Source: RMDB library OK1LIB, as collected in RNAgym. This 177-nucleotide RNA was probed chemically with DMS and 2A3. For DMS the reverse transcriptase was MarathonRT. The reactions ran in a buffer of 150 mM KOAc, 10 mM MgCl2 and 150 mM bicine (pH 8.5), at 24 C. The DMS profile rests on 5,502 reads. The 2A3 profile rests on 901 reads.
[RMDB]
RNA sequence: GGGAACGACUCGAGUAGAGUCGAAAAGAAAAGUUGUCUAGACGUUGACAGCAUAAAACGUCGAAGGAACCUGGGCUUGGUUCCAUAAGCCCGAACGAUCUGUCAUAAUGAUCGAUAUGACGAGAAAGGGUAAGUAAAUCUUCGGAUUUACUUACCCAAAAGAAACAACAACAACAAC
Reactivity to DMS in 0.01 (KOAc 150mM, MgCl2 10mM, bicine 150mM(pH8.5), 24C), signal-to-noise 3, nucleotides 027 to 126: g000a080a040a050a140g020u000u000g000u000c030u010a130g000a020c030g030u000u000g020a070c170a180g000c220a090u040a060a070a000a020c010g000u000c000g030a150a110g000g010a060a050c050c080u020g000g030g020c040u000u000g010g030u000u030c130c020a100u020a010a030g000c000c010c010g030a120a030c090g000a020u010c000u020g000u010c170a030u020a050a110u000g000a030u000c110g000a100u000a010u010g020a040c030g010a100g000a110a150a070
Reactivity to 2A3 in 0.01 (KOAc 150mM, MgCl2 10mM, bicine 150mM(pH8.5), 24C), signal-to-noise 2, nucleotides 027 to 126: g050a000a110a000a000g070u140u080g040u000c010u020a040g070a060c090g060u000u010g010a110c090a080g100c010a220u180a120a300a010a000c000g000u000c000g000a000a010g030g020a000a000c000c130u210g010g010g000c040u020u020g010g000u080u120c040c000a000u090a040a000g060c000c000c000g010a010a000c010g000a000u000c000u100g000u100c060a030u030a240a030u210g010a000u000c000g000a000u000a060u090g050a010c020g000a000g140a060a040a030